[RMDB]
Chemical mapping of a 170-nucleotide RNA with DMS and 2A3. The reactions ran in a buffer of 150 mM KOAc, 10 mM MgCl2 and 150 mM bicine (pH 8.5), at 24 C. High 2A3 reactivity points to a flexible backbone, as in loops and unpaired stretches. It was measured as part of the RMDB library 15KLIB. For DMS, 8,503 sequencing reads were counted.

RNA sequence: GGGAACGACUCGAGUAGAGUCGAAAAUGACCAAGAGAAGGGAAGAAACGGAAGCCUUUCCCCUUGACGCCGGUGAAACUCUGGAAUAGGAAGAAGGAAGGUGGAAAGAAAGGAGGGACCCUCCCGAAUGCAAGUCGCUUCGGCGACUUGAAAAGAAACAACAACAACAAC
Reactivity to DMS in 0.01 (KOAc 150mM, MgCl2 10mM, bicine 150mM(pH8.5), 24C), signal-to-noise 5, nucleotides 027 to 129: u040g020a150c000c060a180a100g010a030g030a050a050g010g010g020a000a000g030a020a070a080c200g050g020a100a080g020c120c060u030u020u000c050c010c020c110u060u020g050a090c180g040c050c070g020g010u040g030a070a040a050c070u000c030u020g030g050a110a040u020a090g030g030a050a070g000a030a030g030g020a050a030g020g030u040g060g030a050a100a050g010a020a110a050g000g020a020g040g020g010a060c030c040c030u030c020c060c020g050a060a100u060g010
Reactivity to 2A3 in 0.01 (KOAc 150mM, MgCl2 10mM, bicine 150mM(pH8.5), 24C), signal-to-noise 3, nucleotides 027 to 129: u110g060a010c000c010a050a000g010a000g000a030a010g000g010g000a000a040g030a050a130a000c080g040g080a050a000g040c020c010u020u000u000c010c000c000c020u010u080g070a020c080g000c030c010g010g000u050g070a080a030a010c010u000c030u090g000g030a010a000u050a060g080g030a020a010g000a010a030g030g000a000a000g000g020u030g020g030a030a090a010g040a010a040a000g060g000a000g000g000g010a010c030c000c000u070c000c000c000g060a070a030u140g000